[RMDB]
RNA sequence: GGGAACGACUCGAGUAGAGUCGAAAACAUUGCGUGACAUUGCCCGCACCGAGGCAGACGACGAAAUCACCCGCUUGCGCGAUGGAGGCGACCAGAGGUGCAAGCGCCUCCGGUCCCGUGGCAUAGAGCUAGCAGGAUGAUUCGUCAUCCUGCUAGCAAAAGAAACAACAACAACAAC
Reactivity to 2A3 in 0.01 (KOAc 150mM, MgCl2 10mM, bicine 150mM(pH8.5), 24C), signal-to-noise 2, nucleotides 027 to 126: c050a040u040u180g010c010g040u050g040a040c010a130u060u140g010c010c010c010g030c040a120c060c090g010a110g000g000c000a010g020a080c070g000a000c010g070a030a040a120u100c030a030c000c040c000g040c050u050u090g000c030g000c000g030a000u040g040g050a020g060g020c120g020a040c000c030a010g000a030g020g080u030g010c040a050a000g050c050g020c000c000u000c000c000g000g010u030c000c000c010g100u050g070g000c070a140u110a080g100a020
Reactivity to DMS in 0.01 (KOAc 150mM, MgCl2 10mM, bicine 150mM(pH8.5), 24C), signal-to-noise 2, nucleotides 027 to 126: c070a060u000u000g010c050g020u000g000a090c130a090u000u000g010c020c010c060g000c090a060c090c050g010a100g000g010c040a030g020a120c120g000a110c030g010a040a030a140u000c100a100c000c030c020g010c060u000u000g060c030g000c030g000a040u000g000g000a180g000g010c170g010a030c020c010a010g010a050g030g040u000g020c070a070a190g020c040g010c010c000u000c000c010g010g010u000c000c030c020g020u000g000g000c050a120u010a060g050a110